The record gives the reactivity of an RNA of 177 nucleotides to DMS. The reactions ran in a buffer of 150 mM KOAc, 10 mM MgCl2 and 150 mM bicine (pH 8.5), at 24 C. Reactivities are given for positions 27 through 126. For DMS the reverse transcriptase was MarathonRT. It was measured as part of the RMDB library TTRDES.
[RMDB]
RNA sequence: GGGAACGACUCGAGUAGAGUCGAAAAAAAAGAUAUGGAGCCAGAACUACAAUCACUUGAUGCGUUGAAACCGAGUCGGAAACGACUCGGUGGAGCAUCUUGGGAUUGCUGGCUCCUAAGUCAAAAACCAUAGUCAGUAGUUCGCUACUGACUAUGGAAAAGAAACAACAACAACAAC
Reactivity to DMS in 0.01 (KOAc 150mM, MgCl2 10mM, bicine 150mM(pH8.5), 24C), signal-to-noise 1, nucleotides 027 to 126: a050a040a090a090g010a030u000a000u000g000g000a020g070c000c000a010g010a070a020c110u000a300c030a010a010u000c000a010c010u000u000g010a020u010g010c000g000u010u000g010a110a130a060c010c000g020a030g020u000c020g000g000a020a020a020c010g000a010c000u000c000g010g010u000g000g000a020g000c000a020u000c000u010u000g010g000g000a000u000u000g000c000u000g010g020c000u000c000c000u000a000a020g000u000c000a090a050a060a110a170